[RMDB]
RNA sequence: GGGAACGACUCGAGUAGAGUCGAAAAUUUUCUGGAAACACUGGAUAAGCACGAAGGAUGGGUACUGUGGAUUGCCAAUGGUAGCGACGGAUGAUGGUAAAAUUGUUGGUAUACAUAGUCUGUCGAAGGAAGUGGCAUAUUUCGAUAUGCCACUUCCAAAAGAAACAACAACAACAAC
Reactivity to DMS in 0.01 (KOAc 150mM, MgCl2 10mM, bicine 150mM(pH8.5), 24C), signal-to-noise 2, nucleotides 027 to 126: u010u000u000u030c070u010g000g000a080a020a080c090a040c060u050g000g000a060u050a090a130g020c090a090c110g000a080a070g000g000a020u020g000g000g000u000a050c070u020g020u020g000g010a040u000u000g000c050c060a050a050u030g030g020u020a030g030c040g020a030c060g020g000a000u000g000a090u000g050g010u020a000a030a160a100u000u000g010u000u000g000g030u000a080u020a000c120a000u000a150g020u020c010u000g000u010c030g000a100a080
Reactivity to 2A3 in 0.01 (KOAc 150mM, MgCl2 10mM, bicine 150mM(pH8.5), 24C), signal-to-noise 1, nucleotides 027 to 126: u030u030u040u030c030u030g020g000a120a020a000c080a000c000u030g000g000a020u060a020a080g060c040a040c140g080a100a000g030g050a030u060g000g100g000u070a040c020u000g000u030g070g020a070u150u000g060c000c000a020a060u040g030g140u080a020g150c000g000a000c040g080g000a060u130g050a010u040g000g060u090a000a000a000a200u050u040g090u010u010g100g000u100a100u050a130c060a000u020a030g000u000c030u000g030u000c030g080a060a000